Overview:
The record gives the reactivity of an RNA of 207 nucleotides to DMS and 2A3. The 2A3 profile rests on 1,606 reads.
[RMDB]
RNA sequence: GGGAACGACUCGAGUAGAGUCGAAAAGGGGGCGAUCGGUUUCGACGGUGACCUGUUCGCUGCAGGGAAGCGUGCCGAGAACGCCGGGUCCGCUCGUGGAUGACCCCGGCAAAAGAAUAAGUGCUAAAUCUAACCGCACUGAGUUCGCUCUCGCUGCCUACAACAUACCGUUCGCGGUAUGUUGUAGAAAAGAAACAACAACAACAAC
Reactivity to DMS in 0.01 (KOAc 150mM, MgCl2 10mM, bicine 150mM(pH8.5), 24C), signal-to-noise 1, nucleotides 027 to 156: g010g070g020g030g020c020g020a020u000c030g020g030u000u000u010c030g020a090c030g020g070u020g000a210c020c010u010g000u010u000c180g010c200u020g000c010a030g000g010g000a120a240g010c000g010u020g040c010c010g080a130g000a060a080c070g000c000c000g000g020g020u000c000c020g000c110u090c120g080u000g010g000a150u000g000a110c070c000c000c000g040g000c010a110a060a080a000g020a080a060u000a110a040g040u000g000c000u020a070a100a120u000c070u020a090a130c070c110g010c000a030c010u020g010a120g000u000u010c000g020c020u000c000u000c000g000c040u000g000c080
Reactivity to 2A3 in 0.01 (KOAc 150mM, MgCl2 10mM, bicine 150mM(pH8.5), 24C), signal-to-noise 3, nucleotides 027 to 156: g010g000g010g000g020c030g000a040u030c020g000g070u040u140u140c110g090a060c030g130g090u030g060a030c010c000u010g000u060u150c100g000c140u150g010c010a010g050g040g030a020a030g210c020g010u030g030c020c020g000a010g040a080a020c070g000c000c000g000g000g000u000c000c000g000c010u080c050g200u260g150g000a060u140g000a020c040c040c080c020g000g000c000a080a050a010a000g070a030a070u150a060a030g010u000g030c020u060a120a050a130u040c050u050a030a090c040c050g000c000a000c010u030g020a040g050u020u010c000g000c000u020c000u000c010g000c050u060g020c020